Structure probing data (2A3 and DMS) for a 207-nucleotide construct.
RNA sequence: GGGAACGACUCGAGUAGAGUCGAAAAUGAAACAGUUCGCUGUUUCAAAAAAAGCGUACUACGCUAUGAGGUGGAACUACGUCGGGUUCCCAAAUAGGAACCUGACGCCACUACCCACCAUAGCGUAUCGCAAAAAACUGUGGGUUCGCCCACAGAACCACUAUUAUCGUUUCGACGAUAAUAGUGGAAAAGAAACAACAACAACAAC
Reactivity to 2A3 in 0.01 (KOAc 150mM, MgCl2 10mM, bicine 150mM(pH8.5), 24C), signal-to-noise 5, nucleotides 027 to 156: u110g010a010a010a000c020a020g020u060u070c170g050c130u000g010u000u010u040c060a100a050a010a000a000a000a020g050c060g020u110a120c060u010a000c030g000c010u000a010u020g110a100g080g030u020g000g030a110a050c100u140a030c230g000u000c000g000g000g000u000u020c020c040c000a160a300a120u240a090g000g000a000a000c000c000u000g000a000c000g000c000c000a040c020u040a040c000c020c000a030c010c000a000u000a000g000c000g000u000a010u110c010g000c000a040a100a030a000a020a070c010u020g000u010g010g020g020u040u110c260g130c020c000c000a000c000a000g010a010a010
Reactivity to DMS in 0.01 (KOAc 150mM, MgCl2 10mM, bicine 150mM(pH8.5), 24C), signal-to-noise 2, nucleotides 027 to 156: u000g000a070a060a060c050a060g010u000u000c270g050c010u000g010u000u000u000c020a000a000a110a060a070a100a200g000c010g020u000a110c120u000a000c000g010c010u000a000u010g020a130g010g000u000g020g000a150a170c030u000a020c010g030u020c010g030g020g030u000u000c000c000c020a040a120a130u000a030g010g000a020a040c000c000u000g010a010c010g000c010c240a040c110u000a050c030c010c030a100c030c030a050u000a000g000c000g000u000a000u000c050g010c020a000a060a060a110a060a040c000u000g010u000g010g020g010u000u010c300g030c000c000c030a000c000a010g010a030a160
It was measured as part of the RMDB library RNAMAK. DMS adducts were read by reverse transcription with MarathonRT. 2A3 adducts were read by reverse transcription with SuperScript II with manganese.